[RMDB]
RNA sequence: GGGAACGACUCGAGUAGAGUCGAAAAAUAAACGUUGUCGCCAUUAAAUUCUGGCUGCGGACCCGAAGUGUGUGCGGGCCCAGGACUUACUCGAAGGGCGCACUUCUUGGGAAUGCGCAUCCCGUAGAUUACCGAGGAGUUUCGACUCCUCGGUAAUAAAAGAAACAACAACAACAAC
Reactivity to 2A3 in 0.01 (KOAc 150mM, MgCl2 10mM, bicine 150mM(pH8.5), 24C), signal-to-noise 2, nucleotides 027 to 126: a010u090a010a120a000c090g060u090u020g060u060c030g010c020c000a050u080u080a050a000a110u300u170c160u050g030g050c010u020g040c070g040g050a120c030c000c000g010a100a030g020u120g000u010g010u000g060c060g000g080g030c030c000c000a020g010g030a090c050u060u080a120c040u140c050g040a180a030g030g030g000c000g020c000a000c000u000u020c020u090u030g040g000g000a000a090u060g010c020g030c000a020u010c000c000c000g000u000a080g000
Reactivity to DMS in 0.01 (KOAc 150mM, MgCl2 10mM, bicine 150mM(pH8.5), 24C), signal-to-noise 2, nucleotides 027 to 126: a120u030a060a050a020c130g000u000u000g000u010c050g000c030c010a050u000u020a080a110a190u010u000c140u010g010g000c020u000g010c010g000g000a300c000c000c000g020a040a090g000u000g000u030g040u010g000c030g020g010g000c000c020c030a100g000g000a130c100u030u020a050c040u020c020g020a200a120g000g010g000c010g000c000a010c080u000u030c010u020u050g010g030g000a010a080u010g000c020g050c030a100u010c000c000c000g010u020a080g000